The record gives the reactivity of an RNA of 177 nucleotides to DMS and 2A3.
DMS adducts were read by reverse transcription with MarathonRT.
2A3 adducts were read by reverse transcription with SuperScript II with manganese.
RNA sequence: GGGAACGACUCGAGUAGAGUCGAAAAUGACGCCCUUGAGGUGAGGAAAGUCCCCCCUCCUCGGCGGUAUCCGGCUGGCGCAAGCCAGCAUCCUGAGAGGGAUGGUAAAGGCAAAAGAAAUAAACGGUUCUAUCUUUGCAUUCGUGCAAAGAUAGAAAAAAGAAACAACAACAACAAC
Reactivity to DMS in 0.01 (KOAc 150mM, MgCl2 10mM, bicine 150mM(pH8.5), 24C), signal-to-noise 4, nucleotides 027 to 126: u040g030a120c030g000c000c000c030u000u000g000a020g000g020u030g020a100g020g010a090a180a200g000u020c050c020c010c060c010c020u010c010c000u000c280g000g020c020g010g000u040a030u020c010c070g010g000c010u000g000g020c000g000c300a130a170g010c000c000a000g000c000a000u000c010c000u000g020a200g010a140g010g010g010a030u000g010g010u000a040a110a080g000g000c100a030a070a110a100g000a080a060a050u010a050a110a160c170g000g000
Reactivity to 2A3 in 0.01 (KOAc 150mM, MgCl2 10mM, bicine 150mM(pH8.5), 24C), signal-to-noise 3, nucleotides 027 to 126: u130g050a030c010g020c000c000c000u000u080g030a030g040g030u050g020a120g060g080a190a080a020g250u220c000c020c010c000c000c000u020c000c000u010c020g020g000c020g000g020u020a090u030c010c020g050g000c010u000g000g000c000g010c060a060a000g000c000c000a000g000c000a000u000c010c010u050g020a030g020a030g040g000g030a030u030g000g060u100a100a030a010g060g000c040a030a000a080a000g140a070a170a030u210a040a070a030c080g070g020